RNA sequence: GGGAACGACUCGAGUAGAGUCGAAAAAGAUGCCCCAUCCUCACGGGCGUGCUGCCUUUCAGCUGGCACUGUGGCUCCCCGCUCCAUUGCUCCAUCAGGCUGGCAUUUCUGGGUGUUGGAGGAUACGAAUGAGCACUAAAUUCGUUUAGUGCUCAUUAAAAGAAACAACAACAACAAC
Reactivity to 2A3 in 0.01 (KOAc 150mM, MgCl2 10mM, bicine 150mM(pH8.5), 24C), signal-to-noise 4, nucleotides 027 to 126: a000g080a050u150g050c000c000c000c000a050u060c010c010u040c000a050c030g020g000g010c010g000u040g030c010u030g010c020c000u060u120u130c040a040g000c050u080g030g000c040a030c090u060g030u070g070g000c000u080c000c010c010c020g040c010u030c020c010a060u040u110g000c010u000c040c010a110u080c020a020g070g030c020u060g040g040c020a040u040u070u070c040u040g080g000g010u110g050u060u090g050g050a000g040g000a030u050a140c030g010
Reactivity to DMS in 0.01 (KOAc 150mM, MgCl2 10mM, bicine 150mM(pH8.5), 24C), signal-to-noise 9, nucleotides 027 to 126: a090g000a120u010g010c020c010c020c070a100u000c020c020u000c050a110c170g010g000g010c050g020u000g010c050u000g010c050c040u000u010u010c120a080g010c070u000g010g000c060a050c060u000g020u010g010g000c060u000c030c030c030c060g000c040u000c040c040a060u000u000g010c040u000c060c040a060u000c080a070g010g000c040u010g010g010c070a080u000u010u000c050u000g010g000g010u000g010u000u000g010g010a060g000g000a090u000a100c160g000